[RMDB]
RNA sequence: GGGAACGACUCGAGUAGAGUCGAAAAUGUGUCUCUGGAUUCGUCGACCGUUGACGUUGAAAACACACGGCUGACGAGACUGUGUGUUCAUUUGCGAGUUUUUUUAUGACAUUUUACACAAGAUGGCGCUAGCAUGGACGUUCGCGUCCAUGCUAGCAAAAGAAACAACAACAACAAC
Reactivity to 2A3 in 0.01 (KOAc 150mM, MgCl2 10mM, bicine 150mM(pH8.5), 24C), signal-to-noise 1, nucleotides 027 to 126: u190g080u050g040u050c050u000c000u010g230g010a070u030u000c030g000u040c000g050a130c020c010g000u000u120g020a020c090g070u090u060g240a180a110a060a000c000a000c000a000c010g000g040c000u080g050a100c130g000a020g020a090c050u000g020u000g020u000g000u060u010c140a040u020u030u210g040c170g000a200g060u000u000u000u000u000u100u200a220u080g000a020c000a010u010u040u000u140a190c130a000c040a000a000g090a110u140g020g020c010
Structure probing data (2A3) for a 177-nucleotide construct. The reactions ran in a buffer of 150 mM KOAc, 10 mM MgCl2 and 150 mM bicine (pH 8.5), at 24 C. For 2A3, 445 sequencing reads were counted. Reactivities are rounded to 0.1 and cut off at 0 and 3. It was measured as part of the RMDB library OK1LIB.